Description:
An RNA of 177 nucleotides, treated with DMS and 2A3 and read out base by base. For 2A3, 6,743 sequencing reads were counted. Source: RMDB library OK2TRN, as collected in RNAgym. The RNA was probed in 150 mM KOAc, 10 mM MgCl2 and 150 mM bicine (pH 8.5) at 24 C.

RNA sequence: GGGAACGACUCGAGUAGAGUCGAAAAGAGACUCAGACAGUGAGUCAGAGAGUGACUCUCACUCUGAGUCUGUGUCAGUCACUGAGACAGACUGUCAGUCAGAGUCAGUCACACACUCAGACUCUCAAGAGUAUCCUUAGUUCGCUAAGGAUACUCUAAAAGAAACAACAACAACAAC
Reactivity to DMS in 0.01 (KOAc 150mM, MgCl2 10mM, bicine 150mM(pH8.5), 24C), signal-to-noise 5, nucleotides 027 to 126: g010a120g010a090c010u000c030a120g010a120c230a130g010u000g000a020g020u000c000a060g000a040g010a100g000u000g010a030c010u000c060u000c170a080c050u010c010u000g000a050g010u000c010u000g000u010g000u000c010a010g000u000c140a140c090u010g000a040g010a020c040a030g010a020c010u000g000u000c100a100g010u020c090a050g010a020g010u000c110a030g000u000c030a040c050a110c270a160c020u000c010a090g000a050c040u010c020u000c090a100
Reactivity to 2A3 in 0.01 (KOAc 150mM, MgCl2 10mM, bicine 150mM(pH8.5), 24C), signal-to-noise 4, nucleotides 027 to 126: g060a000g030a000c030u020c050a030g050a300c050a080g150u020g090a010g000u000c030a000g020a010g000a010g020u010g020a010c010u030c020u030c080a020c020u010c010u010g030a010g040u000c010u000g000u010g020u000c010a020g090u150c050a010c300u030g010a020g010a030c000a020g000a010c020u050g090u210c090a020g090u060c030a010g010a000g040u020c010a010g000u000c000a020c000a000c000a020c050u000c000a020g000a020c010u000c010u000c070a060